[RMDB]
This 177-nucleotide RNA was probed chemically with 2A3. The reactions ran in a buffer of 150 mM KOAc, 10 mM MgCl2 and 150 mM bicine (pH 8.5), at 24 C. Source: RMDB library RFM100, as collected in RNAgym.

RNA sequence: GGGAACGACUCGAGUAGAGUCGAAAACCAGCUUCCAAGCUUUCUCCCUCCCGAACCGCCCUGAUUAGUGUGUGAAGAACUGGCACAUCUCCACGAGGUUGUAAGGAAGGUGAAAAGAUCGCUCUUACACGACUCGUGAGUUCGCUCACGAGUCGUGAAAAGAAACAACAACAACAAC
Reactivity to 2A3 in 0.01 (KOAc 150mM, MgCl2 10mM, bicine 150mM(pH8.5), 24C), signal-to-noise 1, nucleotides 027 to 126: c010c020a000g000c020u130u060c060c040a170a020g030c000u000u060u020c020u000c000c000c000u020c050c000c000g070a010a020c010c000g000c000c000c000u040g030a060u060u060a170g030u010g040u010g060u000g140a030a180g040a070a160c110u080g120g020c000a010c000a020u070c060u000c060c010a080c040g000a140g070g000u010u010g000u040a020a000g040g110a030a000g070g030u060g000a000a030a000a130g030a070u100c000g010c000u000c000u000u020a000
Values are in units of 0.01, from 0 to 300, in steps of 10.